RNA sequence: GGGAACGACUCGAGUAGAGUCGAAAAGGUGGUUACGCAUUCGACGAUUUCCUUCUACGUUUGCUGAUUGGAACAGUUAGGUAGUUUUCGUCGUUUGCGUUUUCCUAGUUUUUUCUAGGUUCACCGAGGGUUUUGGCAACUUCGGUUGCCAGGACCCAAAAGAAACAACAACAACAAC
Reactivity to 2A3 in 0.01 (KOAc 150mM, MgCl2 10mM, bicine 150mM(pH8.5), 24C), signal-to-noise 9, nucleotides 027 to 126: g010g000u010g000g070u130u040a000c000g000c000a000u000u000c000g000a000c000g000a010u020u030u090c060c000u040u050c030u020a030c030g100u050u080u110g220c050u070g070a300u220u300g100g060a120a040c020a030g040u120u070a030g010g070u030a020g010u020u010u020u010c000g000u000c000g000u000u000u000g000c010g000u000u000u010u000c000c000u000a010g000u000u130u100u020u050u060c010u010a020g040g000u050u210c000a000c010c000g000a100
Reactivity to DMS in 0.01 (KOAc 150mM, MgCl2 10mM, bicine 150mM(pH8.5), 24C), signal-to-noise 6, nucleotides 027 to 126: g010g040u000g000g010u020u000a020c000g000c000a010u010u000c000g010a010c000g000a010u010u020u020c300c110u010u010c020u010a020c050g000u020u000u000g010c030u010g010a190u040u050g010g010a070a070c010a040g010u030u010a010g010g010u010a040g010u010u000u000u000c000g020u000c000g010u000u000u000g010c010g000u000u000u000u000c000c000u000a020g010u000u010u010u010u020u010c010u000a040g010g020u020u040c010a050c000c010g010a210

Chemical mapping of a 177-nucleotide RNA with 2A3 and DMS. Source: RMDB library OK1LIB, as collected in RNAgym. For 2A3, 40,138 sequencing reads were counted. The RNA was probed in 150 mM KOAc, 10 mM MgCl2 and 150 mM bicine (pH 8.5) at 24 C. Reactivities are given for positions 27 through 126. For DMS the reverse transcriptase was MarathonRT. The DMS profile rests on 41,738 reads.